[RMDB]
Structure probing data (2A3 and DMS) for a 177-nucleotide construct. Reactivities are given for positions 27 through 126. DMS (dimethyl sulfate) methylates the pairing face of unpaired adenines and cytosines. For 2A3, 3,896 sequencing reads were counted.
RNA sequence: GGGAACGACUCGAGUAGAGUCGAAAAAUGAACGUGGUGGGCGUAAGUUAGUAGAAGAUCUAAUGGUACGCGGUGGGUUUUCGACUGUACUCGAAACCACGACCACCACCAAGUCGUUCCCACCGAAUAAAAUAUCUGUGUUCGCACAGAUAUUUUAAAAAGAAACAACAACAACAAC
Reactivity to 2A3 in 0.01 (KOAc 150mM, MgCl2 10mM, bicine 150mM(pH8.5), 24C), signal-to-noise 2, nucleotides 027 to 126: a000u250g020a010a000c010g010u010g000g010u000g000g000g000c000g000u000a020a020g010u020u020a000g000u040a050g060a300a030g010a090u070c000u030a030a010u050g250g040u040a000c000g000c050g050g000u010g020g000g000u020u010u020u090c010g010a000c020u080g060u170a020c020u000c010g000a030a000a000c010c000a000c000g010a010c000c000a000c010c000a000c000c000a020a000g000u000c000g010u010u000c010c000c010a000c020c030g030a070a060
Reactivity to DMS in 0.01 (KOAc 150mM, MgCl2 10mM, bicine 150mM(pH8.5), 24C), signal-to-noise 3, nucleotides 027 to 126: a050u000g000a040a040c070g010u000g010g030u000g000g000g010c000g020u010a140a300g010u010u000a020g000u000a120g020a200a120g010a130u000c000u000a010a020u000g000g000u010a010c010g010c010g020g030u010g000g000g000u000u000u000u000c010g000a030c030u000g010u000a020c050u000c010g010a040a060a050c010c010a030c010g000a110c020c000a010c010c000a010c020c120a060a010g020u000c010g010u000u000c000c000c000a060c120c150g020a100a120